[RMDB]
RNA sequence: GGGAACGACUCGAGUAGAGUCGAAAACGAUGCGCGCGAUGUGAUGAUGAAGAUUGCAGGUCAUUAUAUGACGUUGGGGCGCUAUCUCAAAAUUUACAUUGAGGACUACAAGCUUCAAUUAAAGAGCGUAUCCAACCUUAUUCGUAAGGUUGGAUACAAAAGAAACAACAACAACAAC
Reactivity to DMS in 0.01 (KOAc 150mM, MgCl2 10mM, bicine 150mM(pH8.5), 24C), signal-to-noise 4, nucleotides 027 to 126: c300g000a100u000g020c020g020c010g000c030g020a050u010g020u010g020a030u000g000a030u000g000a060a040g000a080u010u030g020c230a150g010g000u000c020a020u000u000a100u020a140u000g010a020c050g020u000u000g010g020g010g000c040g000c020u000a060u000c030u000c030a060a030a090a100u000u000u000a060c210a050u000u000g000a000g000g000a060c040u000a120c300a110a160g010c000u000u000c010a010a010u000u000a040a050a060g000a110g030c260
Reactivity to 2A3 in 0.01 (KOAc 150mM, MgCl2 10mM, bicine 150mM(pH8.5), 24C), signal-to-noise 4, nucleotides 027 to 126: c050g040a050u120g010c040g000c010g000c000g020a020u050g020u030g050a040u010g020a010u030g010a020a030g070a110u110u210g030c030a010g090g030u000c010a010u000u130a120u020a060u250g100a020c020g010u050u060g060g000g050g000c010g000c020u040a030u030c020u020c000a080a080a030a050u100u110u050a030c040a020u000u030g010a010g020g010a060c030u100a060c190a120a020g040c000u020u020c010a010a050u050u080a050a060a020g090a030g040c060
Chemical mapping of a 177-nucleotide RNA with DMS and 2A3. For 2A3 the reverse transcriptase was SuperScript II with manganese. It was measured as part of the RMDB library OK2TST. The RNA was probed in 150 mM KOAc, 10 mM MgCl2 and 150 mM bicine (pH 8.5) at 24 C. For 2A3, 4,365 sequencing reads were counted.